About this RNA: Source: RMDB library ARCHII, as collected in RNAgym. This 207-nucleotide RNA was probed chemically with 2A3. 2A3 adducts were read by reverse transcription with SuperScript II with manganese.
RNA sequence: GGGAACGACUCGAGUAGAGUCGAAAAGCUACGUUUAACUACUUACCUUAAUAGUUAGAAAUAAGAUUCUUAGGUUAGUUUUGAUAGUUUAGCCCUGUUAUAUGGCGUUUUAUCAAAGCGAAGUUUAAGUAAUAUAACUAUGAUCGUAGAGGUUAACGAGGCAAUUAGUGUUCGCACUAAUUGCCUCAAAAGAAACAACAACAACAAC
Reactivity to 2A3 in 0.01 (KOAc 150mM, MgCl2 10mM, bicine 150mM(pH8.5), 24C), signal-to-noise 2, nucleotides 027 to 156: g040c010u090a060c090g050u050u090u040a100a150c090u150a010c030u100u090a030c010c010u090u140a090a050u020a040g010u020u010a060g110a040a250a070u300a130a110g020a090u050u050c000u000u000a000g110g010u170u010a020g060u000u020u000u020g010a010u010a030g040u090u110u120a040g040c000c000c020u050g120u190u170a230u080a100u210g000g010c000g000u120u080u000u040a000u000c000a010a000a010g010c010g030a070a020g000u050u000u040a000a000g000u000a020a070u040a010u010a130a000c000u000a020u030g010a030u060c020g000u050a050g060a030g160g000u050u030a040a030c020